[RMDB]
The record gives the reactivity of an RNA of 177 nucleotides to 2A3 and DMS. Values cover nucleotides 27 to 126. The reactions ran in a buffer of 150 mM KOAc, 10 mM MgCl2 and 150 mM bicine (pH 8.5), at 24 C. High 2A3 reactivity points to a flexible backbone, as in loops and unpaired stretches. The DMS profile rests on 1,176 reads. For DMS the reverse transcriptase was MarathonRT.
RNA sequence: GGGAACGACUCGAGUAGAGUCGAAAACAAAGGCUUUCACCCUCGCCCGGAGAGCAGCACAGAUCAACAAAAGCGGCUCUGGGGUAGAAGCUUCAGUUGUAUCCACCGGGUAGUAGCCAGAGAGAAGGGUCUAUUAAUAGUUCGCUAUUAAUAGACCAAAAGAAACAACAACAACAAC
Reactivity to 2A3 in 0.01 (KOAc 150mM, MgCl2 10mM, bicine 150mM(pH8.5), 24C), signal-to-noise 1, nucleotides 027 to 126: c030a000a070a020g030g010c010u070u060u130c120a090c000c000c000u010c020g040c010c010c000g000g000a030g000a000g000c010a020g000c060a050c010a100g170a120u190c050a030a170c000a030a120a050a020g010c000g030g000c000u000c030u070g000g020g020g000u050a050g020a050a010g000c000u050u030c110a160g020u140u110g060u160a120u050c040c020a020c110c010g020g010g000u000a020g000u070a000g040c020c040a040g060a000g000a010g050a150a080g120
Reactivity to DMS in 0.01 (KOAc 150mM, MgCl2 10mM, bicine 150mM(pH8.5), 24C), signal-to-noise 2, nucleotides 027 to 126: c030a080a200a060g010g000c010u000u000u000c050a060c020c010c000u010c150g010c010c010c000g020g010a020g020a000g030c000a000g000c010a090c260a170g000a170u010c210a080a110c110a100a050a150a090g000c010g020g000c000u000c030u000g020g020g000g010u010a000g000a020a030g010c030u000u000c140a090g030u000u000g000u010a040u000c070c050a130c080c010g000g000g000u020a100g030u010a050g030c020c020a070g000a070g050a090g030a080a080g000